[RMDB]
RNA sequence: GGGAACGACUCGAGUAGAGUCGAAAAGCGGUAGGCAGUGGCAAUGGCAAUUUGAAAUUUAUGCACAAGUUGCAGUUCAACUGACAAACAAGCACAUAAAUCAAUUUAUCGGCCAUUUGGGAGGGUGCAGCCUCAUGGUGUUCGCACCAUGAGGCUGAAAAGAAACAACAACAACAAC
Reactivity to 2A3 in 0.01 (KOAc 150mM, MgCl2 10mM, bicine 150mM(pH8.5), 24C), signal-to-noise 3, nucleotides 027 to 126: g010c010g020g180u200a090g110g090c050a030g010u070g110g000c040a040a030u090g040g000c000a020a050u010u020u090g090a140a160a010u040u010u010a040u030g030c040a060c020a210a050g010u010u030g000c030a000g040u110u260c120a220a060c040u060g120a170c000a080a030a000c010a060a110g100c070a020c000a060u040a000a060a020u070c030a000a010u000u110u130a190u140c070g170g000c000c020a020u090u020u110g000g000g030a140g020g010g020u050g000
Reactivity to DMS in 0.01 (KOAc 150mM, MgCl2 10mM, bicine 150mM(pH8.5), 24C), signal-to-noise 2, nucleotides 027 to 126: g020c010g040g000u010a040g000g000c160a100g000u010g000g090c150a090a010u020g000g050c060a040a020u030u000u000g000a080a050a060u000u000u000a030u020g000c170a180c150a060a100g000u000u000g000c000a000g000u000u030c150a160a050c040u020g040a200c060a040a000a000c050a040a300g010c300a250c030a010u000a000a040a040u000c030a000a000u010u000u000a030u060c150g030g060c000c000a000u000u000u010g000g000g000a210g000g000g000u000g000